[RMDB]
RNA sequence: GGGAACGACUCGAGUAGAGUCGAAAAGAUAUGGAUCGGAUGGACAUGCGUGAACCGUCGGAAACGACGGUAAACGCAACAGCCCGCUCCGAUCCUAAGUCAAAACCAGCCACUUCGGUGGCUGGAACCAGUAUCUAAACUUCGGUUUAGAUACUGGAAAAGAAACAACAACAACAAC
Reactivity to 2A3 in 0.01 (KOAc 150mM, MgCl2 10mM, bicine 150mM(pH8.5), 24C), signal-to-noise 3, nucleotides 027 to 126: g020a040u070a040u140g000g010a000u000c000g020g010a020u130g030g000a020c020a090u100g000c010g000u010g010a080a130c000c000g000u000c000g020g020a080a080a040c000g010a000c000g010g000u000a010a010a000c000g000c000a000a000c010a000g030c000c000c010g010c140u000c000c000g000a000u000c000c000u010a140a000g040u020c030a020a020a090a250c000c000a020g000c000c010a010c000u080u170c300g150g000u000g000g000c000u000g000g000a000a030
Reactivity to DMS in 0.01 (KOAc 150mM, MgCl2 10mM, bicine 150mM(pH8.5), 24C), signal-to-noise 3, nucleotides 027 to 126: g000a020u000a300u000g000g000a020u000c000g000g010a030u010g000g030a000c020a300u000g000c020g010u000g000a280a060c000c000g050u010c000g010g010a100a080a220c010g010a010c000g000g010u000a000a190a000c000g000c000a030a050c190a110g040c020c000c000g000c290u000c000c010g010a010u000c000c000u000a000a040g010u000c010a090a050a090a110c000c000a010g010c000c000a000c000u000u010c160g020g000u000g000g000c000u000g010g000a000a040

An RNA of 177 nucleotides, treated with 2A3 and DMS and read out base by base. DMS (dimethyl sulfate) methylates the pairing face of unpaired adenines and cytosines. The reactions ran in a buffer of 150 mM KOAc, 10 mM MgCl2 and 150 mM bicine (pH 8.5), at 24 C. For 2A3, 9,784 sequencing reads were counted.